[RMDB]
Structure probing data (2A3 and DMS) for a 177-nucleotide construct. For DMS the reverse transcriptase was MarathonRT. In probing experiments dimethyl sulfate is read out at A N1 and C N3, which are open when not base-paired.
RNA sequence: GGGAACGACUCGAGUAGAGUCGAAAAGCGAUCGCCCCUUCGUGGCCCCCAGCGCCGUUAUCCAGGCACGGCAAAGGCUGGGAAGCGAGGCUGUUCGCCGGGUAUUCUCACAAACGGCGCAGCUGUGCAUAAGCUGAUAGUUCGCUAUCAGCUUAUGAAAAGAAACAACAACAACAAC
Reactivity to 2A3 in 0.01 (KOAc 150mM, MgCl2 10mM, bicine 150mM(pH8.5), 24C), signal-to-noise 5, nucleotides 027 to 126: g020c020g040a050u070c060g070c010c000c010c020u030u050c060g300u060g020g020c030c000c000c000c010a000g020c010g000c020c000g010u020u040a050u080c040c020a040g060g050c060a010c010g010g000c040a120a050a010g160g000c010u010g000g000g050a010a000g030c030g040a080g050g000c030u060g040u110u160c040g000c010c000g000g000g030u100a120u110u050c080u050c040a050c060a030a180a020c020g020g000c050g000c050a040g010c020u050g050u090g060
Reactivity to DMS in 0.01 (KOAc 150mM, MgCl2 10mM, bicine 150mM(pH8.5), 24C), signal-to-noise 9, nucleotides 027 to 126: g000c030g010a040u000c090g010c030c010c030c060u000u000c040g020u000g010g000c120c050c040c030c050a080g020c100g010c000c000g010u000u000a080u010c120c120a110g010g010c170a030c010g000g010c040a120a110a090g010g010c010u000g000g000g000a040a050g010c070g020a110g010g010c010u010g010u000u000c060g020c000c010g010g000g020u000a090u000u010c030u000c040a150c160a060a100a160c030g000g010c010g020c040a050g010c030u000g010u010g010